This 207-nucleotide RNA was probed chemically with 2A3 and DMS.
For DMS, 3,974 sequencing reads were counted.
Reactivities are given for positions 27 through 156.
Source: RMDB library M2RFPK, as collected in RNAgym.
For 2A3 the reverse transcriptase was SuperScript II with manganese.
The reactions ran in a buffer of 150 mM KOAc, 10 mM MgCl2 and 150 mM bicine (pH 8.5), at 24 C.

RNA sequence: GGGAACGACUCGAGUAGAGUCGAAAAGCACUAGAGGGCGUAACGGCUGGGUGUAACCCAACUCUAGGUGUGCUGAUUAGCGGGCUUGACUCCGUAACAAAUUGGCACUGGUGGUAAAAAGCAUCCCUGACCAUAUACAUCUUCGGAUGUAUAUGAACCUACCAUAACACUUCGGUGUUAUGGUAGGAAAAGAAACAACAACAACAAC
Reactivity to 2A3 in 0.01 (KOAc 150mM, MgCl2 10mM, bicine 150mM(pH8.5), 24C), signal-to-noise 3, nucleotides 027 to 156: g020c010a010c050u010a000g000a010g000g000g000c010g040u070a070a050c070g160g020c000u010g000g010g000u040g030u050a060a050c000c000c000a000a020c000u010c010u000a040g000g120u040g000u000g020c000u000g000a030u010u040a010g000c000g030g000g020c060u140u200g040a150c040u040c090c000g020u020a050a020c030a030a050a020u000u010g010g000c000a020c010u040g130g010u080g060g080u110a050a100a020a010a040g030c020a080u050c010c010c000u020g060a050c030c010a000u000a000u000a000c000a000u000c000u030u040c140g120g000a000u000g000u000a000u000a000u010g000a000a010
Reactivity to DMS in 0.01 (KOAc 150mM, MgCl2 10mM, bicine 150mM(pH8.5), 24C), signal-to-noise 2, nucleotides 027 to 156: g000c040a070c030u010a030g000a110g000g000g020c020g010u000a200a160c210g020g060c040u020g030g070g030u000g000u020a090a300c010c010c010a050a050c000u000c040u000a070g070g010u000g000u000g010c020u010g000a060u000u000a260g010c010g000g010g020c020u000u010g010a160c140u000c000c030g000u000a060a110c150a050a030a040u000u000g010g020c000a080c030u010g010g010u000g000g020u010a020a050a060a050a130g030c060a070u000c010c000c000u000g010a150c200c000a030u000a010u010a010c010a030u000c000u000u010c280g000g020a040u000g040u000a000u000a020u000g000a090a100